[RMDB]
An RNA of 207 nucleotides, treated with 2A3 and read out base by base. For 2A3 the reverse transcriptase was SuperScript II with manganese. Source: RMDB library ARCHII, as collected in RNAgym. The RNA was probed in 150 mM KOAc, 10 mM MgCl2 and 150 mM bicine (pH 8.5) at 24 C. Values cover nucleotides 27 to 156.

RNA sequence: GGGAACGACUCGAGUAGAGUCGAAAACAAACUAUAUGUUUGCUUAAUAACUACUUAGUUUAGUUAUAGUAUUUCACGCAUUAUAGAUAUUUUAGGCUUUAUUUAUAAUCGUAUUACCCAAGUCUAAUAGGAUAUAUGAUUGCAAUAAAUAUAUCUGCUCUAUUAGACGCUUCGGCGUCUAAUAGAGAAAAGAAACAACAACAACAAC
Reactivity to 2A3 in 0.01 (KOAc 150mM, MgCl2 10mM, bicine 150mM(pH8.5), 24C), signal-to-noise 1, nucleotides 027 to 156: c020a020a030a020c020u050a020u110a050u300g030u000u040u030g010c010u150u150a100a010u010a050a020c020u000a000c070u190u120a060g100u210u110u000a000g000u000u010a010u080a080g020u000a060u070u140u110c080a020c040g000c000a000u000u000a000u030a000g010a000u020a060u030u090u020u030a000g000g000c000u000u040u000a000u000u080u000a040u120a020a010u000c050g010u050a110u130u150a080c010c010c010a000a010g000u000c010u050a000a020u070a160g080g010a000u030a000u040a040u020g080a080u160u120g050c020a010a110u020a150a070a000u030a000u000a010u050c000u020g010